[RMDB]
RNA sequence: GGGAACGACUCGAGUAGAGUCGAAAAAGAAAGGAUACCGAAAGGUAUCCAAUUUGCACAUUGGAUUGCGGUAACCUCUCACGUGUGAGGUUGAAGUAACUAUGUGCAGUAAUACCGCAAGAAAAAACAUACUUUACCUGUUCGCAGGUAAAGUAUGAAAAGAAACAACAACAACAAC
Reactivity to 2A3 in 0.01 (KOAc 150mM, MgCl2 10mM, bicine 150mM(pH8.5), 24C), signal-to-noise 8, nucleotides 027 to 126: a010g070a030a040a010g000g000a000u000a000c010c000g040a060a020a010g000g000u000a000u000c000c000a000a000u000u000u010g000c010a000c010a020u050u130g090g070a160u090u040g040c010g020g040u040a010a010c010c010u000c010u070c010a240c190g300u300g070u050g300a010g010g010u000u010g010a010a010g000u020a030a000c000u000a010u010g000u000g000c000a000g010u000a010a040u030a050c020c030g000c160a090a050g140a100a110a000a000a000a000
Reactivity to DMS in 0.01 (KOAc 150mM, MgCl2 10mM, bicine 150mM(pH8.5), 24C), signal-to-noise 6, nucleotides 027 to 126: a090g000a080a110a180g010g000a030u000a000c000c000g000a090a080a160g010g010u000a000u000c000c000a030a020u000u000u000g010c000a000c000a020u000u000g040g010a160u000u000g010c010g000g010u000a020a010c000c000u000c000u000c030a160c300g020u010g020u000g000a010g010g010u010u000g010a070a110g010u000a010a020c010u000a020u000g010u000g000c000a020g000u000a050a070u010a190c010c010g020c180a060a120g020a000a040a060a060a060a130